[RMDB]
About this RNA: Source: RMDB library OK1LIB, as collected in RNAgym. Chemical mapping of a 177-nucleotide RNA with DMS and 2A3. The DMS profile rests on 18,534 reads. The RNA was probed in 150 mM KOAc, 10 mM MgCl2 and 150 mM bicine (pH 8.5) at 24 C. For DMS the reverse transcriptase was MarathonRT.
RNA sequence: GGGAACGACUCGAGUAGAGUCGAAAAGGAACUAUGUUCAGGCAUGAAGCCUCCACGUGCGUGCGGGAGCACCCGGAAACGGCUGAGCAUAGUUCCGAGCUGAAGGAGGCACGGCUCAAAAUAAAAAGCUGGUACAACUGUUCGCAGUUGUACUAGCAAAAGAAACAACAACAACAAC
Reactivity to DMS in 0.01 (KOAc 150mM, MgCl2 10mM, bicine 150mM(pH8.5), 24C), signal-to-noise 6, nucleotides 027 to 126: g000g010a010a000c000u000a010u000g000u000u000c000a000g010g000c010a000u000g010a110a150g020c000c000u000c000c000a300c010g000u000g010c010g040u010g000c020g000g060g000a180g010c000a010c010c000c000g020g000a070a100a140c010g010g000c000u000g000a010g000c000a000u000a000g000u000u000c000c000g010a000g000c000u000g000a130a090g020g000a010g000g010c000a300c020g000g000c000u000c010a130a080a120a080u050a040a070a070a120a070
Reactivity to 2A3 in 0.01 (KOAc 150mM, MgCl2 10mM, bicine 150mM(pH8.5), 24C), signal-to-noise 9, nucleotides 027 to 126: g000g000a000a000c000u000a000u000g010u010u000c000a000g000g000c000a000u010g050a120a030g000c000c000u010c000c000a040c010g010u010g000c000g000u000g000c010g020g120g030a110g010c000a000c000c000c000g010g010a050a060a040c010g000g000c000u000g000a000g000c000a000u000a000g000u000u000c000c000g000a000g000c000u030g020a150a060g000g000a000g000g010c030a020c010g000g000c000u000c000a100a110a010a010u270a020a080a020a010a000